[RMDB]
RNA sequence: GGGAACGACUCGAGUAGAGUCGAAAACAGCUUGACUGUGAUUCAUGGCACAAAGCUGGAAUAACCCUGCCAGUUCUUAGAAGCUUUAAGAUUCAUCGUCUUGAACUUGAUACACAUAGUAUAGCACUUUGACUAUCACAUUCGUGUGAUAGUCAAAAAAAGAAACAACAACAACAAC
Reactivity to 2A3 in 0.01 (KOAc 150mM, MgCl2 10mM, bicine 150mM(pH8.5), 24C), signal-to-noise 6, nucleotides 027 to 126: c000a010g020c010u040u060g100a130c040u020g020u010g020a030u110u180c060a080u130g120g000c040a010c080a080a040a000g000c000u010g000g020a020a050u110a020a040c000c000c000u010g030c000c020a040g010u060u000c030u040u100a060g040a150a040g040c040u050u060u060a070a020g010a040u090u130c040a050u090c110g020u010c000u010u030g020a040a020c000u050u080g040a030u090a070c080a020c020a060u070a040g090u110a040u040a090g090c040a050c090
Reactivity to DMS in 0.01 (KOAc 150mM, MgCl2 10mM, bicine 150mM(pH8.5), 24C), signal-to-noise 6, nucleotides 027 to 126: c010a020g020c000u000u000g020a110c220u010g020u000g010a130u020u020c110a080u010g030g020c050a060c060a080a050a030g010c000u000g000g000a120a120u010a140a130c010c010c010u010g010c040c070a050g010u000u010c040u000u000a110g010a090a050g000c080u000u000u020a030a040g000a030u000u010c220a070u030c240g010u000c010u000u000g000a040a080c030u000u000g010a060u000a040c060a080c140a070u020a070g010u000a030u000a070g010c090a070c180

The record gives the reactivity of an RNA of 177 nucleotides to 2A3 and DMS.
For 2A3 the reverse transcriptase was SuperScript II with manganese.
Values are in units of 0.01, from 0 to 300, in steps of 10.
For DMS the reverse transcriptase was MarathonRT.
Conditions: 150 mM KOAc, 10 mM MgCl2 and 150 mM bicine (pH 8.5), 24 C.
The data come from the RNA Mapping Database (RMDB), libraries RFM100 and RFMREP.